[RMDB]
RNA sequence: GGGAACGACUCGAGUAGAGUCGAAAAUUCUGUACCAGUAAGCAAUUCUUACCACAGCACGAAGAACAGUUAGAGCGUACAGAAGAGUUAUUAGCCAUAGCUAAGGAUAAACAAUGGCAAAGACAAGCCAUCUAAGCGCAUUCGUGCGCUUAGAUGGAAAAGAAACAACAACAACAAC
Reactivity to DMS in 0.01 (KOAc 150mM, MgCl2 10mM, bicine 150mM(pH8.5), 24C), signal-to-noise 2, nucleotides 027 to 126: u030u000c010u000g000u000a070c000c000a120g030u050a010a050g000c160a150a090u000u020c000u000u000a060c080c040a080c200a080g020c090a130c150g000a040a000g040a000a100c270a220g060u000u010a170g000a140g010c220g000u000a000c000a040g000a000a000g000a180g000u010u010a030u010u020a130g000c000c060a010u000a010g010c120u020a120a170g000g000a230u040a030a120a080c080a030a000u000g000g000c000a050a060a130g000a040c040a090a030g030
Reactivity to 2A3 in 0.01 (KOAc 150mM, MgCl2 10mM, bicine 150mM(pH8.5), 24C), signal-to-noise 4, nucleotides 027 to 126: u020u000c010u010g000u010a000c000c020a090g070u080a010a020g030c120a080a180u070u090c040u020u030a160c020c030a140c090a100g050c070a000c140g080a120a050g050a190a000c050a040g040u050u080a040g010a040g110c080g010u010a000c010a000g020a000a000g030a030g010u000u100a080u130u060a070g010c000c000a060u030a020g030c090u210a180a110g140g060a130u160a140a090a000c030a030a040u000g020g000c020a040a000a000g020a030c090a130a020g080